[RMDB]
Source: RMDB library OK3TST, as collected in RNAgym. An RNA of 207 nucleotides, treated with DMS and 2A3 and read out base by base. The 2A3 profile rests on 873 reads. Values are in units of 0.01, from 0 to 300, in steps of 10. The DMS profile rests on 2,299 reads. Conditions: 150 mM KOAc, 10 mM MgCl2 and 150 mM bicine (pH 8.5), 24 C.
RNA sequence: GGGAACGACUCGAGUAGAGUCGAAAAGCAGUUGGACAAAAGGAAAUCAAAGAUCGGUUCUUUCUUGGGAGAGGAAGAGCAAGCUGGAGCCCUGGGGUGCUCAGAUGCUCUUGGGAGUAACAUAGCCCCAUAGCCCCGGGGCUAUACUGGGUGCAGAUAUAAAUGCACGAUUCGUCGUGCAUUUAUAAAAAGAAACAACAACAACAAC
Reactivity to DMS in 0.01 (KOAc 150mM, MgCl2 10mM, bicine 150mM(pH8.5), 24C), signal-to-noise 1, nucleotides 027 to 156: g020c040a050g000u000u010g000g000a090c040a080a110a100a120g020g010a090a080a060u000c080a110a080a140g000a050u010c040g000g050u000u000c020u000u010u000c050u000u000g000g000g000a210g000a050g010g000a030a030g010a090g010c060a040a080g000c010u000g010g000a060g010c030c020c010u010g050g000g000g020u000g000c000u020c050a120g010a260u000g010c000u000c050u000u000g040g030g010a130g000u000a020a120c080a210u000a170g010c020c030c020c030a130u000a150g030c060c010c030c080g040g000g050g040c010u010a000u000a030c040u000g030g020g020u000g000c040a060g000a250
Reactivity to 2A3 in 0.01 (KOAc 150mM, MgCl2 10mM, bicine 150mM(pH8.5), 24C), signal-to-noise 2, nucleotides 027 to 156: g030c010a030g040u080u100g020g010a010c020a060a080a020a030g050g000a040a080a010u060c040a040a090a080g080a140u110c100g060g060u090u030c000u030u100u080c090u120u120g010g020g000a050g020a020g020g020a020a000g010a010g030c000a060a040g040c020u080g000g100a020g000c010c010c020u050g010g000g000g010u070g000c000u030c030a060g020a100u120g000c010u040c000u060u070g050g000g000a080g020u040a120a060c030a080u110a040g000c000c010c000c070a020u060a030g010c000c020c010c050g000g020g000g010c000u000a000u000a000c000u050g060g010g010u040g050c000a000g070a030